This 177-nucleotide RNA was probed chemically with DMS. The reactions ran in a buffer of 150 mM KOAc, 10 mM MgCl2 and 150 mM bicine (pH 8.5), at 24 C. For DMS, 639 sequencing reads were counted. DMS adducts were read by reverse transcription with MarathonRT.

RNA sequence: GGGAACGACUCGAGUAGAGUCGAAAAGACGAGGAUCUCGCAGGCCGGAGAGCGGCCAACGGGAGCAGCGAGAGGGGCGGCGCCGUCAGCACCCCCGACUAUGGGGAGAAGAAGCUGCCACAGGCGCUCGUUAAGAGUCCUUCGGGACUCUUAACGAAAAAGAAACAACAACAACAAC
Reactivity to DMS in 0.01 (KOAc 150mM, MgCl2 10mM, bicine 150mM(pH8.5), 24C), signal-to-noise 1, nucleotides 027 to 126: g010a090c050g010a100g010g010a190u010c010u000c020g060c090a190g010g030c020c000g030g010a170g020a150g050c060g010g000c020c000a060a040c070g010g060g000a060g030c050a050g010c040g030a100g010a110g010g010g000g000c040g010g010c050g040c020c000g030u010c010a010g010c010a300c100c000c000c010c010g030a130c250u030a140u010g010g000g000g000a220g030a070a040g000a090a200g000c010u020g000c130c110a120c080a110g000g000c000g030c010